[RMDB]
RNA sequence: GGGAACGACUCGAGUAGAGUCGAAAACAACAGAAUGAGGCUGGUGCCGGGAUGGGCUGCCAGAGUAUCCCGCAACGCUCGCAGAUCCGCCAGCUUGUCGGUGUCGGUGUGCCAGACUCCAUCUCUGGUCACUUCCAUUGUUCGCAAUGGAAGUGACAAAAGAAACAACAACAACAAC
Reactivity to DMS in 0.01 (KOAc 150mM, MgCl2 10mM, bicine 150mM(pH8.5), 24C), signal-to-noise 2, nucleotides 027 to 126: c070a100a300c080a000g010a060a040u000g000a090g000g000c040u000g010g000u000g020c020c020g000g000g030a060u000g020g000g030c030u000g000c060c070a070g010a020g010u000a090u010c020c010c030g000c060a080a060c160g010c030u010c230g010c020a100g020a070u020c090c040g040c120c030a030g000c010u000u010g000u010c110g020g000u010g020u000c020g000g000u000g000u000g010c040c010a020g010a020c030u000c070c070a020u000c070u000c010u000g000
Reactivity to 2A3 in 0.01 (KOAc 150mM, MgCl2 10mM, bicine 150mM(pH8.5), 24C), signal-to-noise 1, nucleotides 027 to 126: c050a020a000c000a010g060a090a100u080g000a020g050g000c000u010g010g000u050g010c040c000g010g040g000a060u100g040g050g010c030u040g040c080c010a020g020a010g060u040a030u040c000c000c030g010c020a040a070c120g000c010u000c000g000c020a000g020a260u040c010c050g020c000c000a010g000c000u040u050g120u080c030g060g040u070g090u110c050g050g060u090g070u100g080c000c010a000g000a030c010u010c050c020a020u000c050u040c010u120g040